[RMDB]
An RNA of 207 nucleotides, treated with DMS and 2A3 and read out base by base.
For 2A3, 4,441 sequencing reads were counted.
The reactions ran in a buffer of 150 mM KOAc, 10 mM MgCl2 and 150 mM bicine (pH 8.5), at 24 C.
The DMS profile rests on 13,034 reads.
2A3 adducts were read by reverse transcription with SuperScript II with manganese.
DMS adducts were read by reverse transcription with MarathonRT.
It was measured as part of the RMDB library OK3TST.
RNA sequence: GGGAACGACUCGAGUAGAGUCGAAAAUCUGAGAUGUUAAGAACUUUGUCCUGUGAACUUUGUCCUAUGGUAGUAAGUGGCACAGGUGAGAUUCGAACUUGGACCUGUCAGAUGCUGAUCCCUGUACACAGCUGCCUCGAUGCUGGUCCUGACAGCCAGUCUAUACAAUGUUCGCAUUGUAUAGACUAAAAGAAACAACAACAACAAC
Reactivity to DMS in 0.01 (KOAc 150mM, MgCl2 10mM, bicine 150mM(pH8.5), 24C), signal-to-noise 4, nucleotides 027 to 156: u010c020u010g010a100g000a100u010g010u000u010a080a170g000a030a050c020u010u010u000g000u000c000c000u010g030u010g010a150a030c020u000u000u010g010u000c040c040u000a130u000g060g040u000a100g020u000a040a050g020u000g010g020c020a020c010a040g000g000u000g010a060g010a080u000u000c030g010a080a110c080u000u010g020g000a070c030c030u000g040u000c020a110g020a080u000g000c040u000g010a180u000c010c000c000u000g000u000a090c070a110c080a100g020c020u010g010c010c010u000c030g030a120u000g040c060u000g020g010u000c030c000u010g000a080c050a090g010c050c110
Reactivity to 2A3 in 0.01 (KOAc 150mM, MgCl2 10mM, bicine 150mM(pH8.5), 24C), signal-to-noise 6, nucleotides 027 to 156: u070c060u070g040a050g030a100u140g050u160u110a110a050g010a050a060c030u070u070u140g080u150c000c000u040g010u020g050a050a050c030u060u070u100g070u130c030c040u190a160u260g080g020u030a060g030u030a080a040g010u040g140g020c010a000c010a020g000g020u010g010a030g020a110u030u020c030g020a040a030c050u040u060g030g020a040c030c000u000g020u020c010a010g020a120u060g040c030u010g030a090u080c010c000c010u010g030u040a030c170a000c010a020g000c010u050g060c030c030u070c080g030a040u080g020c010u020g000g020u020c000c010u020g030a020c010a000g040c060c010